[RMDB]
RNA sequence: GGGAACGACUCGAGUAGAGUCGAAAAGUGUCAAUAGCAGUAAAUGGCUAGUGGCUGUCAAAUACCACAGGGUUCUUUCAGCAGCCAUGGGAUGUAGAGAGAAUCUCUGAAGCAUCACCGGUCAAUAAGACUCGAAAUAGUUCGCUAUUUCGAGUCUAAAAGAAACAACAACAACAAC
Reactivity to DMS in 0.01 (KOAc 150mM, MgCl2 10mM, bicine 150mM(pH8.5), 24C), signal-to-noise 2, nucleotides 027 to 126: g020u000g000u000c050a010a040u000a020g030c000a050g000u000a080a100a100u030g000g000c010u000a020g020u000g000g010c040u010g020u010c100a120a100a120u010a060c050c050a300c090a030g000g000g000u000u000c040u000u000u000c050a270g030c030a050g010c030c040a180u010g000g010g020a030u000g000u010a070g020a030g000a070g000a060a050u010c020u010c000u000g010a120a130g010c030a040u010c050a100c060c040g000g010u020c070a050a070u000a130
Reactivity to 2A3 in 0.01 (KOAc 150mM, MgCl2 10mM, bicine 150mM(pH8.5), 24C), signal-to-noise 1, nucleotides 027 to 126: g070u020g040u050c010a020a130u060a040g020c000a000g060u300a150a070a090u130g030g010c000u030a000g040u020g030g000c080u000g020u050c030a060a120a060u140a080c030c010a020c070a140g000g080g000u070u000c010u050u100u060c050a000g000c010a000g000c030c000a100u080g070g050g000a030u000g040u160a040g000a010g010a020g040a160a120u040c080u010c000u120g080a130a030g000c010a030u000c000a020c030c040g030g060u130c030a000a010u120a120